Chemical mapping of a 177-nucleotide RNA with 2A3 and DMS. The RNA was probed in 150 mM KOAc, 10 mM MgCl2 and 150 mM bicine (pH 8.5) at 24 C. It was measured as part of the RMDB library OK2TST.
RNA sequence: GGGAACGACUCGAGUAGAGUCGAAAAAUUGAUUCACGAGUGAAUAAAUGGAUGAGUGGGUGAGUUCAAUAUUGACUACAAAAACCCUAAGGCCACACUGGUGAGUGGCUGCGCCUGUAGUCCCAGCUAGUGUCUAUCAGUUCGCUGAUAGACACUAAAAAGAAACAACAACAACAAC
Reactivity to 2A3 in 0.01 (KOAc 150mM, MgCl2 10mM, bicine 150mM(pH8.5), 24C), signal-to-noise 3, nucleotides 027 to 126: a000u070u080g020a030u030u050c000a010c060g040a000g030u030g040a080a080u070a140a090a070u120g000g030a000u040g020a040g180u120g020g030g000u010g020a090g020u010u050c030a040a010u070a110u260u190g030a030c020u030a040c100a010a120a010a070a090c010c010c000u030a080a070g060g000c010c000a010c010a010c020u070g090g020u060g030a040g010u020g030g000c020u040g000c040g030c000c030u060g020u040a010g010u000c000c040c010a040g040c040
Reactivity to DMS in 0.01 (KOAc 150mM, MgCl2 10mM, bicine 150mM(pH8.5), 24C), signal-to-noise 4, nucleotides 027 to 126: a080u000u000g010a070u010u010c010a040c050g010a090g020u000g000a120a080u020a040a090a150u000g000g000a050u000g010a130g030u000g000g010g010u010g000a080g010u000u000c070a070a100u010a120u010u000g000a030c080u000a060c080a040a060a060a110a090c030c020c010u010a090a130g010g000c010c020a020c020a060c080u000g010g010u010g010a060g020u000g010g010c020u000g000c120g020c070c040u010g000u010a070g010u000c010c070c020a090g000c210